[RMDB]
RNA sequence: GGGAACGACUCGAGUAGAGUCGAAAAUACAGUGGCUGACCGGGUUAUCAAGAUGAAAGUAAGUAGCACCCAAUGGGAGAGAUCUGAGAUUGAGUAGGUUAGCACAAAUUUAUACUUUUACUCAAUGGCGUACCAUAUUUUUCGAAAUAUGGUACGCAAAAGAAACAACAACAACAAC
Reactivity to 2A3 in 0.01 (KOAc 150mM, MgCl2 10mM, bicine 150mM(pH8.5), 24C), signal-to-noise 1, nucleotides 027 to 126: u110a020c030a000g000u030g150g000c010u000g000a030c000c030g060g040g080u080u030a100u160c010a010a060g020a110u060g090a130a040a020g010u090a110a040g030u020a000g080c010a070c010c000c110a040a080u130g010g030g000a080g020a000g000a050u010c020u100g050a040g000a120u050u030g030a050g010u040a030g050g040u000u010a000g010c000a000c000a050a070a010u100u200u010a120u020a050c010u050u100u030u050a010c000u020c000a050a030u120g050
Reactivity to DMS in 0.01 (KOAc 150mM, MgCl2 10mM, bicine 150mM(pH8.5), 24C), signal-to-noise 3, nucleotides 027 to 126: u010a150c170a090g010u010g020g010c030u010g000a090c030c050g050g000g000u000u000a080u000c090a080a070g000a090u010g010a050a090a090g020u010a090a120g020u010a070g010c090a100c020c020c020a100a080u010g010g000g000a080g000a090g000a080u010c070u010g000a130g030a090u000u010g000a040g000u000a060g020g000u000u000a070g010c090a060c080a040a090a120u000u000u010a060u010a070c040u000u000u000u000a020c050u010c040a030a060u000g010